[RMDB]
RNA sequence: GGGAACGACUCGAGUAGAGUCGAAAAUUCCGGAGAUCUUUCUCGAGCUCCUCCGCCUUUUUCCUUGCUGUGAUCCAUUUCUCGAGGGUCUCCUCCCUUGUUCCCCUUCGUCCUCUCCUCGUCUCGGCACCUAGAGUCUUCGGACUCUAGAAAAGAAACAACAACAACAAC
Reactivity to 2A3 in 0.01 (KOAc 150mM, MgCl2 10mM, bicine 150mM(pH8.5), 24C), signal-to-noise 9, nucleotides 027 to 129: u070u010c030c010g020g010a040g010a040u010c030u040u150u020c030u070c030g010a020g010c020u030c000c010u020c010c020g040c020c000u050u060u030u070u060c020c010u060u090g040c030u040g030u070g070a070u050c020c010a080u040u090u040c030u010c010g030a080g000g010g000u000c010u010c010c010u040c000c000c000u020u070g020u020u020c000c000c000c000u020u050c020g050u030c010c000u020c000u010c000c000u010c010g050u010c020u000c010g020g000c040a040c010
Reactivity to DMS in 0.01 (KOAc 150mM, MgCl2 10mM, bicine 150mM(pH8.5), 24C), signal-to-noise 9, nucleotides 027 to 129: u020u010c040c020g010g000a060g010a080u020c030u000u040u020c020u030c030g010a110g030c080u020c040c030u030c030c020g020c020c020u060u010u010u020u000c010c040u020u000g020c070u040g000u050g030a060u030c040c050a060u020u040u040c040u020c000g020a090g000g010g020u000c040u020c020c030u020c030c000c030u000u000g000u010u020c000c010c000c020u020u040c000g000u030c020c020u000c000u010c030c030u020c010g030u000c050u010c060g020g020c100a070c080